The record gives the reactivity of an RNA of 177 nucleotides to 2A3 and DMS.
2A3 adducts were read by reverse transcription with SuperScript II with manganese.
Reactivities are given for positions 27 through 126.
The RNA was probed in 150 mM KOAc, 10 mM MgCl2 and 150 mM bicine (pH 8.5) at 24 C.
For DMS the reverse transcriptase was MarathonRT.
2A3 is a SHAPE reagent: it acylates the 2'-hydroxyl of flexible nucleotides of all four kinds.

RNA sequence: GGGAACGACUCGAGUAGAGUCGAAAAUGAAUGAGUGCCCGAUGAAGUAAGUCACUCAGAGGGCGGGAAGAAAUUUGAAUCGUAAUGUGGUGUGACUCAGUCGAUCAGAUUUCGCUCGGUACGUCUAUCCAUGAUACUCGUUCGCGAGUAUCAUGGAAAAAGAAACAACAACAACAAC
Reactivity to 2A3 in 0.01 (KOAc 150mM, MgCl2 10mM, bicine 150mM(pH8.5), 24C), signal-to-noise 2, nucleotides 027 to 126: u160g040a020a070u090g000a010g060u050g030c000c020c030g000a030u040g040a080a040g040u210a110a080g090u170c070a010c040u020c010a010g030a030g000g010g010c160g060g000g000a130a070g030a020a040a040u090u080u050g080a090a080u030c010g000u150a020a190u180g040u060g030g120u170g070u080g200a050c010u050c030a010g050u040c020g000a000u000c000a000g000a000u030u010u000c010g000c040u000c000g050g050u070a010c050g000u000c010u050a130
Reactivity to DMS in 0.01 (KOAc 150mM, MgCl2 10mM, bicine 150mM(pH8.5), 24C), signal-to-noise 3, nucleotides 027 to 126: u020g010a150a110u010g000a090g010u010g020c020c030c040g020a250u000g020a100a100g000u000a070a140g010u010c150a040c030u010c010a010g010a260g000g010g030c020g000g010g010a080a130g010a010a030a020u000u000u010g010a100a040u000c010g000u000a080a090u000g010u010g010g000u010g010u010g010a130c020u000c060a070g000u000c000g010a030u010c040a040g000a030u000u000u000c000g000c030u010c000g000g000u000a110c130g010u000c050u000a150